The record gives the reactivity of an RNA of 177 nucleotides to 2A3 and DMS. The data come from the RNA Mapping Database (RMDB), library OK2TST. DMS adducts were read by reverse transcription with MarathonRT. The reactions ran in a buffer of 150 mM KOAc, 10 mM MgCl2 and 150 mM bicine (pH 8.5), at 24 C. For 2A3, 2,190 sequencing reads were counted.
[RMDB]
RNA sequence: GGGAACGACUCGAGUAGAGUCGAAAACUGCUGGACCAGCUAAAAACUCUGUCAAUCACUACACAAUAUACUGCUUCCCCUGAAGGACCAGUGCUACAAGUAAAUGCUACUGCACAAGGUGCAGCCACCUCAGAUUAGUGUUCGCACUAAUCUGAGGAAAAGAAACAACAACAACAAC
Reactivity to 2A3 in 0.01 (KOAc 150mM, MgCl2 10mM, bicine 150mM(pH8.5), 24C), signal-to-noise 2, nucleotides 027 to 126: c010u010g000c030u040g040g040a070c000c020a020g070c090u090a020a050a060a050a070c040u100c060u050g060u060c030a040a070u080c020a050c140u140a050c080a000c040a100a040u100a020u080a230c050u080g040c020u070u030c010c010c010c010u060g050a040a000g040g000a010c030c010a010g010u000g060c000u080a060c020a110a010g040u070a120a080a040u060g020c020u000a030c020u040g030c010a010c030a070a130g110g010u010g000c000a010g000c020c000a030
Reactivity to DMS in 0.01 (KOAc 150mM, MgCl2 10mM, bicine 150mM(pH8.5), 24C), signal-to-noise 3, nucleotides 027 to 126: c060u000g020c050u000g000g010a110c030c050a060g000c110u000a020a060a080a070a060c060u010c030u000g000u000c040a070a090u000c050a050c060u000a050c130a040c060a030a040u010a100u020a090c070u010g010c070u010u000c040c020c010c130u000g020a110a080g010g010a040c200c050a060g040u000g000c040u000a040c080a060a060g020u010a030a090a080u000g020c050u010a090c030u010g010c020a030c070a120a070g010g000u000g010c030a000g000c080c100a120